Notes: Conditions: 150 mM KOAc, 10 mM MgCl2 and 150 mM bicine (pH 8.5), 24 C. Structure probing data (2A3 and DMS) for a 177-nucleotide construct. The DMS profile rests on 5,681 reads. Reactivities are given for positions 27 through 126. It was measured as part of the RMDB library M2PK50. The 2A3 profile rests on 4,881 reads.
[RMDB]
RNA sequence: GGGAACGACUCGAGUAGAGUCGAAAAGAACGCCACUUCGGUGGCGUUCGAAGAUCUACCACACGUAGAUCACUAUCGUGUGAGACAUCGAUAGAUGUCAAUUGGUCCGGAAGUUCGCUUCCGGAAACUAUGCAUCACAGUUCGCUGUGAUGCAUAGAAAAGAAACAACAACAACAAC
Reactivity to 2A3 in 0.01 (KOAc 150mM, MgCl2 10mM, bicine 150mM(pH8.5), 24C), signal-to-noise 4, nucleotides 027 to 126: g000a000a000c010g010c010c010a020c010u050u090c220g110g000u010g010g000c010g010u000u000c000g010a000a010g030a010u010c020u070a130c040c060a050c020a000c080g010u010a000g020a190u180c060a060c090u090a080u190c080g030u040g020u020g050a150g000a020c000a000u010c000g050a030u120a230g010a000u050g020u010c020a070a120u130u130g170g020u040c000c000g000g020a010a010g000u050u120c180g030c120u000u000c010c000g000g000a000a000a000
Reactivity to DMS in 0.01 (KOAc 150mM, MgCl2 10mM, bicine 150mM(pH8.5), 24C), signal-to-noise 5, nucleotides 027 to 126: g020a000a010c000g000c010c010a020c000u000u010c210g030g020u010g010g010c000g010u010u000c000g010a120a110g000a060u010c020u000a100c080c070a050c090a040c060g020u000a020g000a160u000c260a080c090u010a040u010c040g030u000g000u000g020a300g000a030c010a010u000c000g000a150u030a100g000a010u000g000u000c000a090a090u000u010g020g010u000c010c000g000g010a020a010g010u000u010c230g010c000u000u000c000c000g010g010a000a010a100